[RMDB]
RNA sequence: GGGAACGACUCGAGUAGAGUCGAAAAACGUUUAUCUUGUUUAUCGUUUAGCGUUAGAGAGCGGUAGUAGACUGAGCGAAAUACUCCGCAUUUUGAAGGAACCUGAACGUGAUAUAUGCGACGGUUCACCAAUCGCGAAUUUCGAUUCGCGAUUGGUAAAAGAAACAACAACAACAAC
Reactivity to DMS in 0.01 (KOAc 150mM, MgCl2 10mM, bicine 150mM(pH8.5), 24C), signal-to-noise 1, nucleotides 027 to 126: a070c020g010u000u030u000a070u040c090u000u000g010u010u000u000a070u000c040g010u000u000u010a060g010c140g020u000u020a110g010a090g000a050g000c000g000g000u010a030g030u000a010g000a080c140u000g000a080g000c060g020a030a110a120u000a000c000u000c000c010g020c050a180u010u000u010u000g010a210a180g020g000a010a000c010c010u000g000a050a030c020g010u000g000a100u000a070u000a020u010g010c110g020a240c250g000g010u000u000c080
Reactivity to 2A3 in 0.01 (KOAc 150mM, MgCl2 10mM, bicine 150mM(pH8.5), 24C), signal-to-noise 1, nucleotides 027 to 126: a020c050g000u120u150u000a140u040c040u060u160g040u150u260u000a030u150c010g010u010u020u120a030g030c010g090u030u030a050g020a000g000a010g100c000g040g010u120a000g000u000a010g050a090c150u090g030a030g120c020g020a130a000a000u010a000c010u000c010c030g000c060a090u050u100u050u100g040a090a080g130g030a010a030c030c070u040g040a020a000c010g020u000g080a040u030a040u050a010u300g000c000g000a000c010g030g000u050u100c010